[RMDB]
RNA sequence: GGGAACGACUCGAGUAGAGUCGAAAAGACGCCUGUGUGGCGAAGCGAGAAUGAGAAAGGGCCGCACAUUAAACAGUCCAUCUAGCGGCAAGAUGGAUUGCUCGCAAAAAGAUCCAUAUCACUGAGAACCAGCUGAGGAUUUCGAUCCUCAGCUGGUAAAAGAAACAACAACAACAAC
Reactivity to 2A3 in 0.01 (KOAc 150mM, MgCl2 10mM, bicine 150mM(pH8.5), 24C), signal-to-noise 1, nucleotides 027 to 126: g090a000c000g000c000c000u010g020u060g000u160g100g000c010g060a040a000g010c000g000a030g040a120a250u300g000a020g170a030a120a000g050g040g000c000c000g000c000a050c000a000u080u090a070a170a000c020a000g000u040c000c010a000u040c000u030a090g080c060g050g000c110a040a000g020a010u000g030g000a000u010u020g000c000u000c000g000c010a000a000a000a150a000g090a010u000c000c020a110u110a000u270c100a060c050u110g030a000g010a010
An RNA of 177 nucleotides, treated with 2A3 and read out base by base. The reactions ran in a buffer of 150 mM KOAc, 10 mM MgCl2 and 150 mM bicine (pH 8.5), at 24 C. The data come from the RNA Mapping Database (RMDB), library OK1LIB.